[RMDB]
RNA sequence: GGGAACGACUCGAGUAGAGUCGAAAAAAACACUUGCAUGUUUUGCCGCAGCAACUCUGCGCCGAAAAGCAGCCCGAAAGGGUGAUGUGGUGCCCUUGGACAAAAAUAUUAAAUGCUAGUCCGGCCUUCUCACAGGCUGGGCGACACACUCAAACUGCAUACCCAUAUACUUCGGUAUAUGGGUAUGAAAAGAAACAACAACAACAAC
Reactivity to DMS in 0.01 (KOAc 150mM, MgCl2 10mM, bicine 150mM(pH8.5), 24C), signal-to-noise 2, nucleotides 027 to 156: a060a030a060c040a030c060u000u000g020c080a110u000g000u000u000u000u000g010c090c000g000c000a090g000c070a100a100c190u000c010u000g000c050g020c030c030g010a070a060a040a070g040c020a280g000c100c010c000g000a150a060a100g060g020g040u010g000a050u000g010u000g020g030u000g030c000c020c040u000u000g000g040a130c070a030a050a030a050a120u000a110u000u000a060a050a020u000g010c000u000a300g040u000c040c000g030g020c000c010u000u010c140u000c120a100c160a020g000g020c000u000g010g020g010c020g000a130c240a050c000a010c010u000c040a100a070a080c090u010g020
Reactivity to 2A3 in 0.01 (KOAc 150mM, MgCl2 10mM, bicine 150mM(pH8.5), 24C), signal-to-noise 3, nucleotides 027 to 156: a000a000a000c040a000c030u080u120g000c020a090u130g050u040u040u030u040g040c010c020g000c010a010g030c010a000a090c070u000c010u100g010c000g030c050c000g040a050a040a010a020g020c020a010g000c000c000c010g050a070a030a010g000g000g020u070g020a100u080g030u010g020g040u050g010c020c000c000u000u090g060g000a050c050a060a080a010a040a020u130a080u200u230a080a150a030u070g030c040u050a010g010u010c000c000g010g000c010c010u130u100c140u040c060a100c080a060g000g000c000u000g000g000g000c000g020a000c010a010c000a010c030u110c130a160a120a100c050u100g020